The record gives the reactivity of an RNA of 207 nucleotides to 2A3 and DMS.
Source: RMDB library OK3TST, as collected in RNAgym.
For DMS, 2,892 sequencing reads were counted.
[RMDB]
RNA sequence: GGGAACGACUCGAGUAGAGUCGAAAAGGACGUGCUGUCGCGUCCGAAUUAACGACAGCAACUAGCCUGUCACCAACCAGGCGAAUUAUGUUGGUGCAAUGAGGCGAAAGCCUCUAUCAGACUGGGACAUAGCAGUCGAAUUAGCUAUGUCAUUAGACACCUGGUAGUAGUUCGCUACUACCAGGUGAAAAGAAACAACAACAACAAC
Reactivity to 2A3 in 0.01 (KOAc 150mM, MgCl2 10mM, bicine 150mM(pH8.5), 24C), signal-to-noise 4, nucleotides 027 to 156: g030g020a000c000g010u030g000c000u000g010u010c010g000c000g000u000c010c000g030a010a050u180u100a070a050c000g000a000c000a000g030c010a010a080c070u090a040g030c010c000u010g020u030c000a000c010c000a000a000c000c000a000g030g000c070g010a040a060u220u160a070u150g000u000u000g000g000u000g000c000a000a160u070g000a000g000g000c000g060a070a020a000g000c010c000u000c000u040a050u100c020a010g010a040c010u030g000g040g010a010c010a000u000a010g000c000a010g060u120c130g060a070a130u130u060a090g000c000u000a000u010g020u000c000a020u020u100a060g040a020
Reactivity to DMS in 0.01 (KOAc 150mM, MgCl2 10mM, bicine 150mM(pH8.5), 24C), signal-to-noise 2, nucleotides 027 to 156: g000g010a070c070g070u000g020c030u010g000u010c000g000c010g000u000c270c090g000a050a050u000u000a110a080c010g020a030c010a030g020c040a040a080c120u000a160g000c030c010u000g000u030c020a290c030c010a070a090c050c050a110g000g010c050g050a090a100u000u010a160u000g000u020u000g000g020u010g000c110a060a110u000g000a030g030g050c020g030a180a090a270g000c000c000u000c030u000a060u000c040a150g000a080c050u000g030g040g000a030c020a000u000a030g060c000a150g040u000c080g000a110a180u000u000a120g020c010u000a030u000g000u020c010a140u000u000a130g020a300